An RNA of 177 nucleotides, treated with DMS and 2A3 and read out base by base. For DMS, 1,524 sequencing reads were counted. It was measured as part of the RMDB library RFMREP. The RNA was probed in 150 mM KOAc, 10 mM MgCl2 and 150 mM bicine (pH 8.5) at 24 C.

RNA sequence: GGGAACGACUCGAGUAGAGUCGAAAAGCUGUGUCCCAUGUGGGUCAAUAGGUGGCAGAGAGGAGAAAGGCUAUGUCUUCGGUCUGUGUUCUGACCUAGGAACAUCUGAAUGAUUAGUAACCUAACACAUUUCACCUUUCUUCGGAAAGGUGAAAUGAAAAGAAACAACAACAACAAC
Reactivity to DMS in 0.01 (KOAc 150mM, MgCl2 10mM, bicine 150mM(pH8.5), 24C), signal-to-noise 2, nucleotides 027 to 126: g000c070u010g020u000g000u000c010c030c020a150u010g050u000g000g010g010u030c070a070a110u010a050g000g030u010g000g020c010a010g030a100g000a110g010g000a070g010a070a120a070g000g000c090u000a060u010g010u000c030u010u000c040g000g020u020c050u020g010u010g000u000u010c050u000g000a040c060c100u000a120g020g010a030a040c050a010u000c050u000g020a070a080u000g000a120u000u000a120g010u010a040a100c050c010u010a050a150c240a180
Reactivity to 2A3 in 0.01 (KOAc 150mM, MgCl2 10mM, bicine 150mM(pH8.5), 24C), signal-to-noise 1, nucleotides 027 to 126: g050c030u110g030u000g020u030c030c030c030a000u130g140u040g040g000g020u040c000a100a000u040a160g070g000u070g090g000c030a010g040a000g000a020g070g000a010g030a050a050a000g110g000c030u000a090u120g020u000c010u000u020c030g050g070u000c010u020g020u020g020u070u000c000u070g030a070c000c000u010a020g040g010a010a010c000a020u000c050u030g090a090a150u080g020a060u030u040a040g050u070a110a110c010c000u040a070a030c120a000